This 177-nucleotide RNA was probed chemically with DMS and 2A3. High DMS reactivity at an A or C suggests that its Watson-Crick edge is free. Reactivities are given for positions 27 through 126.
RNA sequence: GGGAACGACUCGAGUAGAGUCGAAAACGAUGACUGUUCCUCCUGUAGCUUCAAGUCUCAGCUGCAGGAUUUUAUGUUGUCGUAGAUCAAACCUGACUUUAUUCACUCGGAACGCACUGGGACAUCUUAUUGCCUAUUACUUCGGUAAUAGGCAAUAAAAAGAAACAACAACAACAAC
Reactivity to DMS in 0.01 (KOAc 150mM, MgCl2 10mM, bicine 150mM(pH8.5), 24C), signal-to-noise 4, nucleotides 027 to 126: c030g020a000u000g000a040c000u030g010u000u010c120c140u010c000c000u020g000u000a000g000c000u000u000c210a130a130g030u010c120u010c100a030g000c010u010g000c000a010g000g000a000u000u010u000u020a040u000g000u000u000g040u000c000g010u000a060g000a170u000c180a070a090a110c090c050u000g000a050c050u000u000u000a040u000u000c020a080c170u010c070g000g020a070a100c060g020c040a060c040u000g010g000g030a070c100a050u020c110u000
Reactivity to 2A3 in 0.01 (KOAc 150mM, MgCl2 10mM, bicine 150mM(pH8.5), 24C), signal-to-noise 7, nucleotides 027 to 126: c000g000a010u010g000a000c010u040g060u180u120c010c010u020c000c000u010g000u020a000g020c010u110u080c180a230a120g100u040c050u020c090a000g000c000u000g000c000a000g000g000a000u010u010u000u010a070u030g010u000u000g010u000c000g010u010a030g030a110u110c100a060a040a070c000c050u060g060a080c030u090u120u040a090u060u080c030a020c060u020c020g040g020a060a020c030g020c060a060c060u050g020g000g020a040c010a070u020c050u020
2A3 adducts were read by reverse transcription with SuperScript II with manganese.